[RMDB]
RNA sequence: GGGAACGACUCGAGUAGAGUCGAAAAGUGGAUGUUCCACCCCCCAGCGGUGCCGAGUGAGGCCUAUCCCGGGGAUCGGUGAAUCGUCCCGGAAUGGGGACUCCGAGGGCCCCUUCCGAAGUGACGGCAGACUUUGGGUUCGCCCAAAGUAAAAGAAACAACAACAACAAC
Reactivity to 2A3 in 0.01 (KOAc 150mM, MgCl2 10mM, bicine 150mM(pH8.5), 24C), signal-to-noise 9, nucleotides 027 to 129: g040u030g030g020a140u160g080u200u080c000c000a020c010c000c000c000c000c000a020g050c040g080g050u120g080c010c010g030a040g040u260g050a040g040g040c000c010u030a040u040c020c000c000g020g000g010g020a090u130c040g040g030u120g090a100a080u120c010g030u040c000c000c000g000g020a030a060u160g010g000g000g080a120c010u010c040c070g030a210g020g070g000c000c000c000c000u040u010c010c010g030a110a040g050u080g110a020c010g010g020c020a050g020
Reactivity to DMS in 0.01 (KOAc 150mM, MgCl2 10mM, bicine 150mM(pH8.5), 24C), signal-to-noise 9, nucleotides 027 to 129: g030u020g000g020a140u060g030u040u040c000c000a030c000c000c000c000c000c010a100g030c120g010g010u040g040c010c010g010a130g010u040g000a040g000g020c010c020u010a060u000c030c010c030g000g010g030g010a080u030c040g010g020u040g040a100a090u020c020g000u010c010c020c020g000g000a010a020u030g010g010g010g000a080c010u000c050c070g010a160g030g020g000c000c010c010c010u000u000c020c010g010a090a060g010u010g030a050c030g020g000c160a110g000